Description: Chemical mapping of a 177-nucleotide RNA with 2A3 and DMS. The 2A3 profile rests on 1,566 reads. It was measured as part of the RMDB library RFM100. The DMS profile rests on 1,029 reads.

RNA sequence: GGGAACGACUCGAGUAGAGUCGAAAAGACCUGUAAAUGUUUUUCGAGUAUCUUCAUUCUUCCCUCAUCCUACUGAUGUUUUAGAGAGGAAGAUACUCAGCAAAACAUUUACUGGUUACUUGUAUAGCGUGUAUCGCCAUUUCGAUGGCGAUACACGAAAAGAAACAACAACAACAAC
Reactivity to 2A3 in 0.01 (KOAc 150mM, MgCl2 10mM, bicine 150mM(pH8.5), 24C), signal-to-noise 3, nucleotides 027 to 126: g050a010c000c000u010g000u000a000a000a010u010g000u000u000u000u010u050c000g000a010g000u000a000u000c000u000u020c000a220u010u110c040u090u140c030c000c020u010c010a010u000c010c080u150a200c070u240g020a030u030g100u010u020u070u110a050g020a000g010a010g000g030a030a000g000a010u000a000c000u000c000a010g030c030a000a010a000a000c000a000u010u000u000a010c010u000g000g000u040u020a050c010u050u120g150u110a130u100a100g070
Reactivity to DMS in 0.01 (KOAc 150mM, MgCl2 10mM, bicine 150mM(pH8.5), 24C), signal-to-noise 1, nucleotides 027 to 126: g000a000c040c070u040g020u000a010a000a010u000g000u000u000u000u000u000c020g000a000g010u000a000u000c000u020u000c010a150u030u000c000u050u020c200c290c010u020c000a000u000c030c300u080a220c280u130g000a020u000g010u080u010u010u060a140g000a000g000a060g000g030a000a020g000a000u030a000c000u000c000a030g000c050a010a000a000a000c000a000u110u030u000a000c000u000g000g000u000u010a110c050u000u010g030u000a230u000a130g000